Chemical mapping of a 177-nucleotide RNA with DMS. The reactions ran in a buffer of 150 mM KOAc, 10 mM MgCl2 and 150 mM bicine (pH 8.5), at 24 C.
RNA sequence: GGGAACGACUCGAGUAGAGUCGAAAAAAAAAGAUAUGGAUCUCUAGCGUGGGCGAUGAAAUACAAACAAAGUAUAUCGGAAACGAUAUACAAAAAAUGUAUGGAGCCUCGGGUCCUAAGUCAAAAACGUUUUAUACAUGUUCGCAUGUAUAAAACGAAAAGAAACAACAACAACAAC
Reactivity to DMS in 0.01 (KOAc 150mM, MgCl2 10mM, bicine 150mM(pH8.5), 24C), signal-to-noise 1, nucleotides 027 to 126: a010a030a040a040a060g000a050u000a250u010g000g000a010u000c000u010c140u030a160g040c160g060u020g010g000g030c020g000a090u010g020a050a050a000u000a000c000a000a010a120c110a060a110a090g000u000a000u000a010u000c010g030g000a130a070a100c000g000a000u000a010u000a000c000a000a020a050a040a090a020u000g010u000a000u000g000g000a040g040c000c010u020c020g010g010g010u010c000c000u010a040a080g000u020c010a030a070a070a020a130
For DMS the reverse transcriptase was MarathonRT. For DMS, 1,323 sequencing reads were counted.